An RNA of 177 nucleotides, treated with 2A3 and DMS and read out base by base.
[RMDB]
RNA sequence: GGGAACGACUCGAGUAGAGUCGAAAAUGCGCUUCGUCGGAACUGCCACCUUCGAGGCACUCUCCGGCCAACCGGUGUACACCGACGUGUUCGACGAUAUUCCGGCAGUGUCGCAUGUGUACCUCGAGUCGGGAUCGAGUUUCGACUCGAUCCCGACAAAAGAAACAACAACAACAAC
Reactivity to 2A3 in 0.01 (KOAc 150mM, MgCl2 10mM, bicine 150mM(pH8.5), 24C), signal-to-noise 1, nucleotides 027 to 126: u060g010c070g000c040u040u090c070g010u010c010g030g000a050a000c040u090g040c010c000a100c040c020u030u100c030g040a070g010g050c000a000c000u070c000u000c000c010g020g000c000c030a080a090c000c000g070g000u010g030u040a100c150a040c060c000g040a040c080g090u090g000u120u100c080g010a060c060g080a060u030a090u170u070c000c000g000g000c030a030g010u060g030u140c020g030c040a060u090g010u020g030u040a020c000c030u030c040g010a020
Reactivity to DMS in 0.01 (KOAc 150mM, MgCl2 10mM, bicine 150mM(pH8.5), 24C), signal-to-noise 1, nucleotides 027 to 126: u000g000c060g030c060u010u000c060g000u000c010g000g030a060a040c230u010g000c050c050a070c020c080u030u000c110g030a100g020g010c010a040c020u000c080u000c070c010g020g010c130c110a210a140c040c030g000g010u000g000u000a070c110a110c020c050g000a060c040g040u000g010u000u000c030g000a070c110g010a150u010a140u000u000c020c010g080g010c030a050g020u010g020u000c020g000c110a030u000g030u000g010u020a100c060c010u000c000g010a100
Annotation:
For 2A3 the reverse transcriptase was SuperScript II with manganese.